[RMDB]
RNA sequence: GGGAACGACUCGAGUAGAGUCGAAAAGAUAUGGAAACCUGGAGGGAGCUCUCGGGUCGGAAACGACCCACGCGAGAGCAUCGAUCUCCGGUUUCCUAAGUCAAACAAGAAUCGUUCGCGAUUCUUGCGGAUAACUACUCUUCGGAGUAGUUAUCCGAAAAGAAACAACAACAACAAC
Reactivity to 2A3 in 0.01 (KOAc 150mM, MgCl2 10mM, bicine 150mM(pH8.5), 24C), signal-to-noise 1, nucleotides 027 to 126: g010a000u010a010u090g000g000a010a020a020c050c090u200g070g030a010g000g000g040a020g000c000u000c010u000c000g030g000g000u000c020g000g010a030a000a000c000g020a000c010c140c010a000c110g240c270g000a010g000a010g020c010a010u300c000g000a010u000c000u010c000c000g010g000u010u000u000c000c000u000a000a000g000u020c020a080a040a170c010a020a000g000a010a000u020c010g060u180u180c300g030c010g170a000u000u000c000u000u000g060
Reactivity to DMS in 0.01 (KOAc 150mM, MgCl2 10mM, bicine 150mM(pH8.5), 24C), signal-to-noise 2, nucleotides 027 to 126: g000a040u000a040u030g000g000a000a010a020c000c000u010g010g000a010g010g000g010a010g070c000u020c000u000c010g000g050g050u000c010g030g000a020a010a020c000g010a020c000c000c000a030c210g050c280g000a010g000a010g010c000a180u000c250g000a010u060c000u000c010c010g050g020u000u000u000c000c000u000a000a070g000u010c010a130a120a300c010a000a010g000a000a010u000c000g040u000u020c260g020c010g010a000u000u000c000u000u000g010